[RMDB]
RNA sequence: GGGAACGACUCGAGUAGAGUCGAAAACGGAAGGGACAACAGCGUGGUACGCAGAAUACGAUGAAUGGGGUAACCUGCUGAAUGAAGAGAACCCGCAUCAGCUGCAGCAGCUUAUCCGCCUGCCGGGCCACGAUGAUCAGUUCGCUGAUCAUCGUGGAAAAGAAACAACAACAACAAC
Reactivity to 2A3 in 0.01 (KOAc 150mM, MgCl2 10mM, bicine 150mM(pH8.5), 24C), signal-to-noise 2, nucleotides 027 to 126: c010g000g030a010a040g030g020g050a070c050a050a000c020a080g010c110g300u050g070g050u090a020c030g030c010a000g030a070a080u190a160c190g020a020u060g140a060a200u230g020g020g000g040u030a070a010c040c000u040g000c010u090g090a130a200u150g030a210a010g090a000g020a020a010c110c000c010g040c000a040u020c020a000g050c000u050g030c010a000g020c000a010g000c010u000u030a070u020c000c040g050c050c010u030g020c000c000g010g020g040
Reactivity to DMS in 0.01 (KOAc 150mM, MgCl2 10mM, bicine 150mM(pH8.5), 24C), signal-to-noise 2, nucleotides 027 to 126: c080g010g000a080a050g000g000g000a100c110a100a110c080a090g000c050g040u010g020g000u000a090c190g030c020a060g020a160a140u000a120c130g000a050u010g010a080a140u000g010g030g040g010u000a050a130c160c000u000g010c020u000g020a080a100u000g000a070a070g000a110g030a110a070c060c030c040g030c040a080u010c010a030g010c070u020g000c050a060g000c040a070g000c080u000u000a080u000c040c020g000c070c020u020g010c020c030g000g000g000